An RNA of 177 nucleotides, treated with 2A3 and read out base by base. The data come from the RNA Mapping Database (RMDB), library RFM100.
RNA sequence: GGGAACGACUCGAGUAGAGUCGAAAAAUUAUUCUUCUCGUUCCCACCUAAUUUCGCAAUUUAUUGUCCUUGACUUCUACCACGAGAAAAAAAUUAAGAAAAUGCAACGCUGCCCGUGCAGGGUUUUACCUGGUCAAUCAUUCGUGAUUGACCAGGUAAAAGAAACAACAACAACAAC
Reactivity to 2A3 in 0.01 (KOAc 150mM, MgCl2 10mM, bicine 150mM(pH8.5), 24C), signal-to-noise 1, nucleotides 027 to 126: a000u190u300a120u060u010c000u050u000c000u000c000g000u010u000c000c000c010a010c010c010u030a090a140u020u100u040c000g000c070a000a300u050u000u020a040u040u120g080u000c000c000u000u080g160a180c000u000u020c000u090a010c000c020a160c200g000a000g030a180a000a000a030a000a010a210u200u300a200a130g000a010a020a000a010u140g000c010a030a030c090g000c030u030g020c020c000c000g030u040g070c000a000g000g000g000u000u040u000u000

Source information: Conditions: 150 mM KOAc, 10 mM MgCl2 and 150 mM bicine (pH 8.5), 24 C. 2A3 adducts were read by reverse transcription with SuperScript II with manganese.